[RMDB]
RNA sequence: GGGAACGACUCGAGUAGAGUCGAAAAAGGCCGGAGACGGAGAGGCAGGAGGUCCCGAGGAGUAUCCAAGCAAAGAAGGGGAAGGAUCUCGAGGAAAACAUCUCCCAAGAAGAAGCGGGAACAAUCUCCAAUAAGUAUAGUUCGCUAUACUUAUUGGAAAAGAAACAACAACAACAAC
Reactivity to DMS in 0.01 (KOAc 150mM, MgCl2 10mM, bicine 150mM(pH8.5), 24C), signal-to-noise 1, nucleotides 027 to 126: a130g020g010c040c030g020g010a080g000a110c070g020g010a150g040a060g010g020c100a010g030g030a070g020g000u010c040c010c010g010a090g010g010a130g000u010a100u000c070c060a070a240g000c170a040a100a050g000a100a090g010g000g010g010a090a150g000g010a060u010c050u000c030g000a080g010g000a040a060a090a050c070a030u010c080u010c020c000c020a100a120g010a030a130g040a020a050g030c080g000g010g010a060a050c170a060a140u000c050u010
Reactivity to 2A3 in 0.01 (KOAc 150mM, MgCl2 10mM, bicine 150mM(pH8.5), 24C), signal-to-noise 2, nucleotides 027 to 126: a000g070g010c020c030g040g020a030g020a020c020g040g010a050g000a030g040g020c030a030g010g070a030g010g030u010c020c010c020g020a060g020g000a020g000u050a030u010c040c040a050a020g030c050a140a100a110g090a080a050g060g000g010g000a000a040g030g000a050u020c020u030c050g020a100g000g030a040a050a000a000c040a110u010c040u000c030c000c010a020a010g030a030a000g020a050a000g020c050g000g030g000a010a010c030a030a040u040c020u020